Chemical mapping of a 177-nucleotide RNA with 2A3. Reactivities are rounded to 0.1 and cut off at 0 and 3. The RNA was probed in 150 mM KOAc, 10 mM MgCl2 and 150 mM bicine (pH 8.5) at 24 C. 2A3 is a SHAPE reagent: it acylates the 2'-hydroxyl of flexible nucleotides of all four kinds. The 2A3 profile rests on 921 reads.
[RMDB]
RNA sequence: GGGAACGACUCGAGUAGAGUCGAAAACAAUCAUAGGGGACGCAAGAGUACGCUCGUCCCGCUCCGCCGGUCCUACUAGCGUAUAUCUCCGCCAAGACCUAUCAAAGUCACAGCUGAUUGCCUACAACGGCGUACUAUCCUUCGGGAUAGUACGCCGAAAAGAAACAACAACAACAAC
Reactivity to 2A3 in 0.01 (KOAc 150mM, MgCl2 10mM, bicine 150mM(pH8.5), 24C), signal-to-noise 2, nucleotides 027 to 126: c070a000a080u170c000a050u110a070g030g000g040g090a010c030g130c180a130a100g030a000g060u030a040c070g020c070u030c060g070u130c080c040c000g000c040u050c020c000g060c000c000g030g010u010c000c000u000a040c020u010a000g030c010g040u010a060u000a090u070c070u000c030c010g040c020c040a020a020g010a050c000c090u100a070u140c040a070a140a060g000u090c040a040c010a070g020c000u060g000a090u040u050g040c010c010u020a040c070a120a000